[RMDB]
RNA sequence: GGGAACGACUCGAGUAGAGUCGAAAAGUAUAGCGAAGUUAGAGGCGACGAGCUAUACGAUGAAUCAGCCUCUAUUGAUAUCGGUAUACAGAUCCGCGGCGAUCAGAUACCGUAAUUAGUAGCCGCAAUCCGGAGUGGAGACGCACGACGGUCGUCACGUAUACUACUCCUUCGGGAGUAGUAUACGAAAAGAAACAACAACAACAAC
Reactivity to 2A3 in 0.01 (KOAc 150mM, MgCl2 10mM, bicine 150mM(pH8.5), 24C), signal-to-noise 4, nucleotides 027 to 156: g000u000a000u000a000g010c010g080a170a030g030u030u040a020g030a000g030g000c020g020a040c010g010a020g000c010u000a000u000a010c040g010a060u160g120a020a160u120c070a020g000c000c000u020c020u050a140u050u250g090a070u050a030u220c010g000g000u000a000u020a100c130a080g010a010u020c020c110g030c020g030g000c030g000a010u010c020a020g000a050u010a010c000c000g000u010a000a140u080u080a020g150u020a010g000c030c020g040c040a000a050u050c020c010g010g020a030g020u050g030g050a190g040a070c100g000c070a020c020g060a010c000g040g020u050c010g080u040c030a010
Reactivity to DMS in 0.01 (KOAc 150mM, MgCl2 10mM, bicine 150mM(pH8.5), 24C), signal-to-noise 1, nucleotides 027 to 156: g000u000a050u010a040g000c000g000a120a190g000u010u010a050g010a120g030g040c000g060a060c030g020a220g020c040u020a010u000a010c010g000a070u000g000a110a130u020c110a200g000c030c000u000c010u000a070u000u000g030a060u010a170u000c020g020g000u000a020u020a120c070a240g060a040u000c000c060g040c150g010g000c030g000a060u000c020a100g010a080u000a030c030c040g020u000a030a050u020u000a120g060u000a080g040c000c010g010c050a140a060u010c020c000g060g000a180g010u010g020g010a100g010a090c080g040c100a070c010g000a110c030g030g030u000c060g020u010c020a150

Conditions: 150 mM KOAc, 10 mM MgCl2 and 150 mM bicine (pH 8.5), 24 C. An RNA of 207 nucleotides, treated with 2A3 and DMS and read out base by base. DMS adducts were read by reverse transcription with MarathonRT. Reactivities are given for positions 27 through 156.